[RMDB]
RNA sequence: GGGAACGACUCGAGUAGAGUCGAAAAGGGCGGGUGACGUUUGCGCGGAACCUGUACGACAACAGAUUGGAUCGGAGUUGGGAGUACGAUCAGGUGGGGCGGUUGCAGCAUGCGUACAGUGGGGAGGGCUCUGGACGUGCUUCGGCACGUCCAGAGCAAAAGAAACAACAACAACAAC
Reactivity to 2A3 in 0.01 (KOAc 150mM, MgCl2 10mM, bicine 150mM(pH8.5), 24C), signal-to-noise 1, nucleotides 027 to 126: g050g000g000c080g000g150g000u060g000a000c000g100u080u080u000g150c200g000c060g000g000a000a070c000c000u010g000u000a000c070g250a000c000a100a210c110a100g120a200u060u200g140g000a000u030c040g000g000a070g300u010u300g010g000g000a070g000u220a060c130g000a150u000c000a000g000g300u070g000g050g030g030c000g020g000u000u120g100c030a000g000c000a250u300g000c000g070u040a240c000a040g000u150g000g040g000g080a000g010g060
An RNA of 177 nucleotides, treated with 2A3 and read out base by base. For 2A3 the reverse transcriptase was SuperScript II with manganese. Values cover nucleotides 27 to 126. The reactions ran in a buffer of 150 mM KOAc, 10 mM MgCl2 and 150 mM bicine (pH 8.5), at 24 C.